An RNA of 177 nucleotides, treated with 2A3 and DMS and read out base by base.
2A3 adducts were read by reverse transcription with SuperScript II with manganese.
For 2A3, 1,141 sequencing reads were counted.
Values cover nucleotides 27 to 126.
[RMDB]
RNA sequence: GGGAACGACUCGAGUAGAGUCGAAAAGUGCUUGUAUUUCCAAGGACAUUAUCAGCUACAUUUCUGAAUCUCAAUGUACCCAGAAGGCAGGCAUCACUGCCCCAGUAUGUAGUUGAGGAAAUUGAGGUCCAUGUGUGCCAUUCGUGGCACACAUGGAAAAAGAAACAACAACAACAAC
Reactivity to 2A3 in 0.01 (KOAc 150mM, MgCl2 10mM, bicine 150mM(pH8.5), 24C), signal-to-noise 2, nucleotides 027 to 126: g030u040g010c040u050u040g090u190a160u160u090u050c060c000a020a040g040g000a050c030a050u090u150a000u190c000a000g070c020u020a000c010a070u130u150u000c000u020g080a100a140u050c050u020c100a080a110u120g030u120a140c020c030c020a030g020a070a000g040g000c030a000g030g000c060a120u160c020a040c000u000g000c000c020c020c020a020g030u050a020u030g060u020a000g000u000u000g000a040g050g000a070a090a000u070u120g040a010g150g070
Reactivity to DMS in 0.01 (KOAc 150mM, MgCl2 10mM, bicine 150mM(pH8.5), 24C), signal-to-noise 1, nucleotides 027 to 126: g020u000g000c070u020u010g000u000a060u000u000u000c070c040a030a070g020g040a040c010a050u010u000a150u000c010a020g000c010u000a000c040a050u000u000u020c040u000g000a170a050u000c100u000c040a050a050u000g020u000a190c040c040c010a080g020a100a170g000g000c050a020g000g000c230a100u000c210a070c050u000g010c060c020c130c030a010g000u000a010u000g010u010a000g000u000u000g010a050g010g010a060a000a080u010u010g000a050g010g020